About this RNA: Chemical mapping of a 177-nucleotide RNA with DMS. In probing experiments dimethyl sulfate is read out at A N1 and C N3, which are open when not base-paired. The data come from the RNA Mapping Database (RMDB), library TTRDEL.
RNA sequence: GGGAACGACUCGAGUAGAGUCGAAAAGAUAUGGACGAUCACAGGACAUGACGCUCGGAAACGAGCGUUCAACAGCCUGGAUCGUCCUAAGUCAAAACGGCCGUAAUGGUUCGCCAUUACGGCCGAACCGAUAAAGCGAGUUCGCUCGCUUUAUCGGAAAAGAAACAACAACAACAAC
Reactivity to DMS in 0.01 (KOAc 150mM, MgCl2 10mM, bicine 150mM(pH8.5), 24C), signal-to-noise 1, nucleotides 027 to 126: g010a010u000a300u000g000g010a000c020g010a010u000c000a060c010a010g020g010a160c040a100u000g010a010c000g010c000u010c000g030g000a040a080a100c000g020a010g010c000g010u010u010c010a060a100c270a140g010c020c020u010g000g000a000u000c010g000u000c000c000u000a010a090g010u010c020a070a110a120a170c040g040g020c000c000g000u000a030a010u030g000g000u010u000c260g000c000c000a010u000u000a000c000g000g000c020c000g000a000a010